[RMDB]
RNA sequence: GGGAACGACUCGAGUAGAGUCGAAAACUCAAAUUGAGUGAUAAUAAUUGUUAUCUUAAUGCAGUUAUUAUGACACUUGAUUUAUUGAAGGACAUUAAAUUUGUUAUACCUGCUCUACAGCAUGCAUCACGUUUGCAGUUCGCUGCAAACAAAAGAAACAACAACAACAAC
Reactivity to 2A3 in 0.01 (KOAc 150mM, MgCl2 10mM, bicine 150mM(pH8.5), 24C), signal-to-noise 9, nucleotides 027 to 129: c000u000c000a000a000a010u010u010g010a010g000u000g000a000u010a000a000u000a000a010u000u000g020u040u170a150u160c140u130u280a140a070u210g000c010a000g000u000u000a000u000u000a000u040g050a040c000a000c000u000u010g010a010u010u020u060a170u070u210g100a100a050g070g020a030c050a060u080u230a070a070a150u170u140u100g100u070u050a080u030a100c010c020u020g040c010u000c030u080a070c040a010g020c000a010u050g030c010a050u080c040a030c120
Reactivity to DMS in 0.01 (KOAc 150mM, MgCl2 10mM, bicine 150mM(pH8.5), 24C), signal-to-noise 6, nucleotides 027 to 129: c000u030c120a010a000a010u030u020g000a040g030u030g020a060u020a040a030u030a000a000u030u050g030u000u000a110u080c300u060u080a070a070u010g020c000a030g010u020u000a040u000u000a000u030g020a200c040a020c040u060u000g030a020u000u070u000a100u040u050g050a170a070g040g000a070c040a060u000u000a030a020a100u060u020u070g020u020u010a100u000a120c100c030u040g020c070u030c110u010a100c070a050g000c000a040u000g030c070a050u050c100a070c180